[RMDB]
RNA sequence: GGGAACGACUCGAGUAGAGUCGAAAAACUUGGGUUGGCUCUUAUAGUCCCCAAUUUCCAUUUCCUCAAAAUGCUGGGGGAUCCUGGCUUGACUUUUCAGGAAAAAGCGCUAUAAGGGUAAAGGAAAAAACAGAGUUGAAUUCGUUCAACUCUGUUUAAAAGAAACAACAACAACAAC
Reactivity to 2A3 in 0.01 (KOAc 150mM, MgCl2 10mM, bicine 150mM(pH8.5), 24C), signal-to-noise 1, nucleotides 027 to 126: a000c050u080u050g030g100g000u040u120g090g000c010u010c040u070u070a070u050a050g050u050c000c000c000c050a030a040u080u010u010c030c000a020u030u010u010c020c000u040c040a060a040a050a070u130g040c070u060g010g010g000g000g010a010u050c010c020u000g000g010c000u060u050g090a150c040u120u050u180u170c110a040g040g000a050a060a030a000a000g120c070g010c000u020a030u020a060a020g050g020g020u060a110a060a040g020g000a100a060a070
Reactivity to DMS in 0.01 (KOAc 150mM, MgCl2 10mM, bicine 150mM(pH8.5), 24C), signal-to-noise 3, nucleotides 027 to 126: a130c110u010u000g010g010g030u010u010g010g010c000u000c050u000u000a040u000a020g010u010c020c000c000c020a050a060u000u010u010c070c030a190u000u000u000c020c010u000c110a040a070a050a090u000g030c110u000g020g010g010g020g010a080u000c010c000u000g000g000c130u010u010g010a100c160u000u010u000u000c110a070g010g000a060a030a070a080a080g030c180g010c030u010a030u000a020a010g010g000g020u010a060a080a110g020g000a010a070a100
Conditions: 150 mM KOAc, 10 mM MgCl2 and 150 mM bicine (pH 8.5), 24 C. An RNA of 177 nucleotides, treated with 2A3 and DMS and read out base by base. Source: RMDB library OK2TRN, as collected in RNAgym. Values cover nucleotides 27 to 126.